[RMDB]
RNA sequence: GGGAACGACUCGAGUAGAGUCGAAAAGAUAUGGACGUACCGCCCGGGAGCGAUGUGAUCGGAAACGAUCAUUUCGCAUCGAUCGUAACAUGUACGUCCUAAGUCAAAAUCUGGGUUCGCCCAGAAAGUAUAACUCGAAGUUCGCUUCGAGUUAUACAAAAGAAACAACAACAACAAC
Reactivity to DMS in 0.01 (KOAc 150mM, MgCl2 10mM, bicine 150mM(pH8.5), 24C), signal-to-noise 5, nucleotides 027 to 126: g000a010u000a140u020g000g000a020c010g010u000a000c000c200g010c200c220c030g010g020g000a060g040c010g000a010u000g010u000g010a010u000c010g010g000a050a050a050c000g020a010u000c000a010u000u000u000c000g020c010a220u010c120g000a060u000c030g010u000a110a140c190a090u010g000u000a000c000g010u000c000c010u000a010a030g000u000c030a070a060a090a140u000c000u000g010g000g020u000u010c250g020c000c000c000a010g000a030a040a110
Reactivity to 2A3 in 0.01 (KOAc 150mM, MgCl2 10mM, bicine 150mM(pH8.5), 24C), signal-to-noise 5, nucleotides 027 to 126: g010a000u020a020u050g000g000a000c010g000u000a010c000c070g180c090c080c030g040g020g000a110g030c020g000a000u000g010u000g020a010u000c010g000g000a010a010a010c000g000a000u000c000a010u010u010u010c010g010c010a030u240c030g020a040u040c020g060u090a080a130c050a220u300g000u000a000c010g000u000c000c000u010a020a000g000u000c020a020a010a040a300u000c010u010g010g000g040u040u090c130g120c030c000c000a000g010a000a020a010